[RMDB]
RNA sequence: GGGAACGACUCGAGUAGAGUCGAAAAACGGUGCGGAAGUUCGCGCUUCCGUGAAACGCGAAAAUCGGACGGUGGCUCCAAGUCGCAUCGCAAAACCGCGGCAAGUGGAGUUAGCGAGAGGAGGCUGAAACCAUCCAACACUUCGGUGUUGGAUGAACAGGUUUUAGUACUUCGGUACUAAAACCUGAAAAGAAACAACAACAACAAC
Reactivity to 2A3 in 0.01 (KOAc 150mM, MgCl2 10mM, bicine 150mM(pH8.5), 24C), signal-to-noise 2, nucleotides 027 to 156: a000c030g010g000u070g020c010g030g000a020a000g020u140u200c060g040c030g010c100u050u030c000c000g000u040g010a120a070a010c070g030c030g040a030a060a000a130u100c050g020g050a010c030g030g060u020g020g000c020u000c000c000a010a010g030u010c010g010c050a080u060c060g040c150a060a080a060a030c070c050g000c000g030g010c040a140a130g080u060g030g000a040g000u040u070a040g050c040g030a070g010a020g040g030a020g020g010c040u040g020a050a050a020c040c000a000u000c000c000a000a000c000a000c000u020u040c140g090g000u000g000u000u000g000g000a000u000g000a000a010
Reactivity to DMS in 0.01 (KOAc 150mM, MgCl2 10mM, bicine 150mM(pH8.5), 24C), signal-to-noise 1, nucleotides 027 to 156: a010c040g040g000u010g030c040g020g000a040a050g000u000u000c120g020c260g010c020u000u010c010c100g040u000g020a080a060a020c010g010c000g040a030a040a100a100u000c070g020g010a070c050g000g030u000g000g040c000u000c000c000a030a100g000u000c000g010c000a110u010c040g000c060a100a130a170a200c040c150g000c010g040g040c040a060a190g000u000g040g000a100g010u000u000a100g000c010g000a080g020a120g030g010a100g070g020c030u000g010a130a080a100c070c000a050u010c010c000a010a010c000a010c010u000u000c300g030g020u000g010u000u000g000g000a000u000g010a040a100
Chemical mapping of a 207-nucleotide RNA with 2A3 and DMS. For DMS, 1,940 sequencing reads were counted. Reactivities are given for positions 27 through 156. For 2A3 the reverse transcriptase was SuperScript II with manganese.